[RMDB]
RNA sequence: GGGAACGACUCGAGUAGAGUCGAAAAAUGGUGGCAAAUCUGGCUCCGCGCAAAAUGCGCUUCGGUAUUUCUGAAGGCAUGGUGAUGGCUGCUGGCCCUGGCGGUAAGGACAUCUUCCUGCUCAGCCCACACCACUCUUGUUCGCAAGAGUGGUGUGAAAAGAAACAACAACAACAAC
Reactivity to DMS in 0.01 (KOAc 150mM, MgCl2 10mM, bicine 150mM(pH8.5), 24C), signal-to-noise 2, nucleotides 027 to 126: a090u000g000g020u000g000g000c060a050a080a070u000c070u010g010g020c020u000c080c030g000c080g000c070a080a070a080a040u000g000c010g030c000u000u000c000g000g010u000a160u020u020u010c010u010g030a040a040g000g020c010a030u010g000g000u000g030a080u000g000g010c050u000g010c080u000g020g010c060c050c050u000g010g020c040g010g000u010a060a060g010g010a060c190a070u000c080u010u000c000c030u010g040c070u010c050a080g000c100c040
Reactivity to 2A3 in 0.01 (KOAc 150mM, MgCl2 10mM, bicine 150mM(pH8.5), 24C), signal-to-noise 1, nucleotides 027 to 126: a000u150g000g010u020g000g000c070a080a000a100u070c080u080g040g000c010u020c050c060g000c000g000c080a040a070a000a220u040g020c260g060c000u020u010c050g040g010u080a270u150u270u030c030u030g050a060a010g030g000c000a010u080g010g000u110g020a100u020g000g020c020u040g020c000u070g000g000c000c010c060u050g040g000c030g030g020u020a070a020g030g000a020c030a140u090c010u050u000c040c000u010g020c050u010c030a030g000c010c010